Notes
Source: RMDB library OK2TRN, as collected in RNAgym. The record gives the reactivity of an RNA of 177 nucleotides to 2A3 and DMS. The RNA was probed in 150 mM KOAc, 10 mM MgCl2 and 150 mM bicine (pH 8.5) at 24 C. For DMS the reverse transcriptase was MarathonRT. For DMS, 3,300 sequencing reads were counted.
RNA sequence: GGGAACGACUCGAGUAGAGUCGAAAACACACCACGGCCUCGCUGGCGAUCAGCGCAGGCGCUAACGUCAAGGUCGUGCAACGGCUCCUUGGACACGCAGCAGCGGCGAUGACGCUCGACCGGCACGGUAUCACAGGUUGUUCGCAACCUGUGAUACAAAAGAAACAACAACAACAAC
Reactivity to 2A3 in 0.01 (KOAc 150mM, MgCl2 10mM, bicine 150mM(pH8.5), 24C), signal-to-noise 3, nucleotides 027 to 126: c040a020c010a020c010c020a040c040g060g000c010c000u020c060g050c050u050g060g000c050g070a290u220c020a000g000c010g020c090a080g100g000c000g000c030u070a120a030c020g020u030c030a040a050g020g000u030c020g000u060g110c040a110a090c040g060g000c030u060c030c010u070u090g090g030a030c030a020c130g020c020a090g010c020a020g030c010g050g000c020g030a050u100g030a010c050g020c020u050c030g060a080c030c000g000g000c080a030c070g050
Reactivity to DMS in 0.01 (KOAc 150mM, MgCl2 10mM, bicine 150mM(pH8.5), 24C), signal-to-noise 4, nucleotides 027 to 126: c080a100c110a100c140c010a090c120g010g000c010c000u000c070g040c050u000g020g010c210g010a110u000c040a020g000c040g030c170a080g030g000c020g020c060u000a070a160c050g020u000c060a090a080g010g000u000c020g040u000g010c060a050a130c090g010g000c010u020c040c030u010u000g020g020a080c090a100c100g010c110a040g000c100a040g020c020g000g000c010g000a100u000g000a080c050g020c020u000c030g000a080c040c010g010g020c040a110c140g020